[RMDB]
RNA sequence: GGGAACGACUCGAGUAGAGUCGAAAAAGUACCGGCCGGAUCGGCCACGAUACUCUACGAUCGCGCUGAUCGCGCGGCCAUGGUACGCGCGUACUGGCCGGAUCUCAUGGCGCAGGCCGAGGCCGCGAAGGCCUUGUCUGUUCGCAGACAAGGCCUUAAAAGAAACAACAACAACAAC
Reactivity to DMS in 0.01 (KOAc 150mM, MgCl2 10mM, bicine 150mM(pH8.5), 24C), signal-to-noise 2, nucleotides 027 to 126: a110g010u000a110c090c010g040g030c050c020g020g000a170u000c010g000g010c030c070a050c080g000a030u000a030c080u010c170u020a090c190g010a020u000c010g020c300g030c020u000g010a040u000c020g000c080g030c000g010g000c010c010a090u030g040g010u000a050c020g050c120g040c050g020u000a070c110u010g030g000c000c050g010g000a060u000c010u000c090a140u000g020g000c000g000c070a070g010g000c020c010g000a060g030g000c030c010g040c070g010
Reactivity to 2A3 in 0.01 (KOAc 150mM, MgCl2 10mM, bicine 150mM(pH8.5), 24C), signal-to-noise 1, nucleotides 027 to 126: a000g030u040a030c020c000g000g070c000c030g070g040a050u040c000g050g040c000c040a000c020g000a010u080a130c030u100c200u240a050c170g050a010u040c010g020c060g000c070u070g030a060u000c030g000c020g030c000g050g020c000c020a150u170g040g030u080a070c030g000c000g000c030g010u110a250c060u040g020g040c000c000g040g040a060u030c040u070c010a100u120g090g040c030g030c120a110g100g000c000c010g020a070g010g030c000c010g000c010g030

The data come from the RNA Mapping Database (RMDB), library OK2TRN.
Chemical mapping of a 177-nucleotide RNA with DMS and 2A3.
As a SHAPE reagent, 2A3 marks flexible, mostly unpaired nucleotides at the ribose 2'-OH.